Source information
This 177-nucleotide RNA was probed chemically with DMS and 2A3.

RNA sequence: GGGAACGACUCGAGUAGAGUCGAAAAAAGGACUGGUUCGCCAGUCCUUAUUCAUUCGUACGCAACGAAGCGUAAGUCAUAACGCAAAUGACUAAAAGCGUAUACGAAAGGACUUCGGUCCUUUCAAUAACUAGGAACGGUUCGCCGUUCCUAGUUAAAAAGAAACAACAACAACAAC
Reactivity to DMS in 0.01 (KOAc 150mM, MgCl2 10mM, bicine 150mM(pH8.5), 24C), signal-to-noise 3, nucleotides 027 to 126: a040a010g030g020a020c010u020g000g000u000u010c190g020c000c000a000g010u000c000c000u000u000a020u000u000c090a190u010u000c050g030u000a050c030g000c020a060a070c130g010a070a090g020c070g000u010a100a060g000u010c050a030u000a080a100c190g030c210a080a080a050u000g010a040c050u000a070a080a090a120g010c030g010u000a050u000a060c260g000a010a010a000g000g010a020c000u000u010c190g030g010u000c000c000u010u000u000c010a090a060
Reactivity to 2A3 in 0.01 (KOAc 150mM, MgCl2 10mM, bicine 150mM(pH8.5), 24C), signal-to-noise 1, nucleotides 027 to 126: a000a000g000g000a000c020u020g000g000u030u020c090g050c030c000a000g010u000c000c000u000u000a000u020u030c000a010u010u010c020g010u040a020c010g000c120a160a030c070g170a150a030g060c010g030u050a090a040g050u030c000a030u010a180a020c060g010c130a110a160a120u060g020a000c030u090a100a010a000a000g000c040g010u060a020u020a080c060g000a000a000a010g000g000a000c020u030u030c210g050g010u010c000c020u010u010u020c010a000a000

For 2A3 the reverse transcriptase was SuperScript II with manganese.
For DMS the reverse transcriptase was MarathonRT.
It was measured as part of the RMDB library M2PK50.
The reactions ran in a buffer of 150 mM KOAc, 10 mM MgCl2 and 150 mM bicine (pH 8.5), at 24 C.